[RMDB]
RNA sequence: GGGAACGACUCGAGUAGAGUCGAAAAUCCUCAGGGUUCGCCCUGAGGAAAACGCUCAACUCAUGGAGCGCACGACGGAUCACCAUCGAUUCGACAUGUGAAAAAGAACUUGCUUCGGCAAGUUCAACUUAGUCCAAUCGUUCGCGAUUGGACUAAGAAAAGAAACAACAACAACAAC
Reactivity to DMS in 0.01 (KOAc 150mM, MgCl2 10mM, bicine 150mM(pH8.5), 24C), signal-to-noise 2, nucleotides 027 to 126: u000c000c000u000c000a000g030g000g030u000u020c220g030c000c000c000u000g000a000g020g000a000a000a080a100c080g000c000u000c000a060a090c040u010c060a190u000g000g000a050g000c000g000c030a030c030g000a110c000g020g000a030u000c030a090c200c160a140u010c150g010a020u000u000c020g020a100c040a070u000g030u000g000a100a080a110a120a050g010a030a000c000u000u000g000c010u000u000c160g020g000c000a000a000g000u000u000c000a010a020
Reactivity to 2A3 in 0.01 (KOAc 150mM, MgCl2 10mM, bicine 150mM(pH8.5), 24C), signal-to-noise 2, nucleotides 027 to 126: u010c000c000u030c000a000g030g000g030u040u080c160g050c040c000c020u010g000a000g000g020a010a020a010a000c010g000c000u010c030a030a060c030u020c110a090u150g080g020a020g000c010g040c030a010c050g110a010c030g010g020a010u000c030a030c170c060a210u210c120g000a020u020u000c010g030a020c050a110u180g020u020g120a070a090a040a060a120g000a010a000c000u020u000g000c000u030u040c140g080g000c000a000a010g000u020u020c000a000a000